[RMDB]
RNA sequence: GGGAACGACUCGAGUAGAGUCGAAAAUUCGAUAACGAUGCCUUUGAAGAUAAAUGGGAAAACGGUAAUUUCAAUCGUGUUGGUAAAUACGCUAAGACAUUACGAGGAGUAAUUGCCGAAGCGGAAAAGAUCCAAGGUGUUCGCGAAAUUGAGGACAGCAUAUAAGGCCUUUCGAGGCCUUAUAUGCAAAAGAAACAACAACAACAAC
Reactivity to DMS in 0.01 (KOAc 150mM, MgCl2 10mM, bicine 150mM(pH8.5), 24C), signal-to-noise 1, nucleotides 027 to 156: u000u000c060g000a050u000a080a040c010g030a010u010g010c000c020u020u000u010g030a120a110g020a170u000a010a110a070u010g010g010g010a050a120a100a220c040g010g010u000a070a140u000u000u000c070a070a100u000c030g000u000g000u000u000g000g030u020a050a030a140u030a090c000g000c070u000a080a300g000a030c000a020u000u000a030c030g020a180g010g000a300g020u010a030a030u000u030g080c020c020g050a100a030g000c030g000g000a080a030a070a090g000a090u000c020c010a050a040g050g010u000g000u000u000c030g000c070g000a010a070a100u000u000g000a120g060g000a070c040a120
Reactivity to 2A3 in 0.01 (KOAc 150mM, MgCl2 10mM, bicine 150mM(pH8.5), 24C), signal-to-noise 2, nucleotides 027 to 156: u030u020c010g040a060u070a170a060c060g020a020u030g000c000c000u080u030u060g070a120a100g000a090u200a130a170a190u270g070g100g000a080a070a000a070c020g020g030u060a050a070u040u060u060c060a010a040u000c000g050u040g020u040u060g000g070u110a090a030a000u260a050c020g000c060u080a120a000g070a030c010a050u000u180a000c040g000a030g070g000a050g060u090a010a030u060u040g020c000c000g000a040a020g080c000g010g010a000a130a020a000g110a000u000c010c010a040a000g050g010u040g030u030u120c000g000c050g040a150a020a000u100u060g000a040g000g040a020c020a030